An RNA of 177 nucleotides, treated with 2A3 and DMS and read out base by base. The reactions ran in a buffer of 150 mM KOAc, 10 mM MgCl2 and 150 mM bicine (pH 8.5), at 24 C.
RNA sequence: GGGAACGACUCGAGUAGAGUCGAAAACGACUUACCUUCGGGUAAGUCGACAUAGGUGAGUUCAUCGGAAAGCUGCCUAGGUGAGUUCAUCGGAUAGCUGCCACAUGUAACGGUUCGCCGUUACAAAGGUAUCGUUAAAGUUCGCUUUAACGAUACCAAAAGAAACAACAACAACAAC
Reactivity to 2A3 in 0.01 (KOAc 150mM, MgCl2 10mM, bicine 150mM(pH8.5), 24C), signal-to-noise 8, nucleotides 027 to 126: c010g000a000c000u000u010a000c000c000u010u050c230g040g010g000u010a010a000g000u000c000g000a000c010a050u160a050g030g000u010g020a030g020u040u020c010a010u020c050g020g090a160a060a060g060c110u110g060c050c030u050a080g000g020u020g010a030g010u020u030c010a020u030c020g010g030a080u100a030g050c060u090g070c030c010a080c020a110u090g000u000a000a000c010g000g050u030u040c230g020c070c000g000u010u000a000c000a010a020a010
Reactivity to DMS in 0.01 (KOAc 150mM, MgCl2 10mM, bicine 150mM(pH8.5), 24C), signal-to-noise 7, nucleotides 027 to 126: c010g010a010c000u000u000a000c000c010u000u010c220g040g010g010u000a000a010g010u000c000g020a020c110a070u000a080g020g020u000g000a050g000u010u000c020a020u010c030g000g010a110a090a100g010c070u000g020c040c020u000a140g020g010u000g000a040g010u000u000c020a020u000c010g000g010a090u010a080g020c080u000g000c020c030a110c190a140u010g000u000a000a010c000g010g000u000u010c210g020c000c000g010u000u000a000c010a030a050a070
Description: For 2A3, 22,735 sequencing reads were counted.